[RMDB]
RNA sequence: GGGAACGACUCGAGUAGAGUCGAAAAGAUAUGGAUCUUCGUAGCAACAGCUGCGGGUCGGAAACGACCCUGCAGACAUGCUAUUCGGAUCCUAAGUCAAAAGGUACCUCUCUUCGGAGAGGUACCACUAAUGUUAAUUCUUCGGAAUUAACAUUAGAAAAGAAACAACAACAACAAC
Reactivity to 2A3 in 0.01 (KOAc 150mM, MgCl2 10mM, bicine 150mM(pH8.5), 24C), signal-to-noise 6, nucleotides 027 to 126: g000a010u030a000u050g000g000a000u010c010u030u010c060g000u010a010g000c090a090a210c130a300g010c000u010g010c000g000g000g010u000c000g000g010a000a010a000c000g000a000c010c010c030u100g000c010a000g010a010c020a240u300g000c000u000a000u000u010c010g010g000a000u010c000c000u000a010a000g010u010c020a010a010a070a240g000g000u000a000c010c000u010c010u000c010u090u200c300g090g000a000g000a000g010g000u000a000c000c000a000
Reactivity to DMS in 0.01 (KOAc 150mM, MgCl2 10mM, bicine 150mM(pH8.5), 24C), signal-to-noise 7, nucleotides 027 to 126: g010a010u000a060u010g000g000a010u000c000u010u010c110g000u000a000g010c000a150a080c230a150g000c000u000g010c000g000g000g020u000c000g020g000a010a020a040c010g010a010c000c000c000u010g040c000a010g010a000c090a180u010g010c000u000a010u000u000c150g000g000a010u000c000c000u010a000a080g010u000c000a120a080a150a110g000g010u000a000c000c000u000c000u000c000u000u020c240g030g000a020g010a010g010g010u000a000c000c010a030
Record summary
Chemical mapping of a 177-nucleotide RNA with 2A3 and DMS. For DMS, 15,854 sequencing reads were counted. Reactivities are given for positions 27 through 126. The reactions ran in a buffer of 150 mM KOAc, 10 mM MgCl2 and 150 mM bicine (pH 8.5), at 24 C.